[RMDB]
RNA sequence: GGGAACGACUCGAGUAGAGUCGAAAAGAUAUGGAUGAUGAUCAGGCAUCGAUCUACAUGUCGGAAACGACAUAAGUAGGGAGCCUGGUCAUCCUAAGUCAAACCUUCGUUCUUCGGAACGAAGGAAGAGUGUAAUAAUCUUCGGAUUAUUACACUCAAAAGAAACAACAACAACAAC
Reactivity to DMS in 0.01 (KOAc 150mM, MgCl2 10mM, bicine 150mM(pH8.5), 24C), signal-to-noise 9, nucleotides 027 to 126: g010a070u000a100u010g000g000a060u000g000a030u000g010a090u010c010a010g010g020c000a300u000c220g000a050u010c010u000a000c010a050u000g010u000c000g020g000a070a050a150c010g010a010c000a010u000a040a120g010u000a010g000g000g000a050g020c000c000u000g000g000u000c000a000u000c000c030u000a060a220g000u000c040a120a140a210c000c000u000u000c000g010u000u000c000u000u020c220g020g000a010a000c000g000a010a000g010g010a020a020
Reactivity to 2A3 in 0.01 (KOAc 150mM, MgCl2 10mM, bicine 150mM(pH8.5), 24C), signal-to-noise 9, nucleotides 027 to 126: g040a020u080a040u170g050g010a050u060g000a010u050g050a090u300c010a000g020g000c010a120u300c290g050a060u020c020u000a000c000a020u020g000u000c000g020g000a030a020a020c010g020a000c000a010u070a130a170g000u010a000g010g020g020a010g000c000c000u000g010g000u000c000a000u010c000c000u010a020a000g010u000c030a100a050a250c000c000u000u000c000g010u000u000c010u040u040c250g190g010a000a000c010g010a000a000g000g000a020a040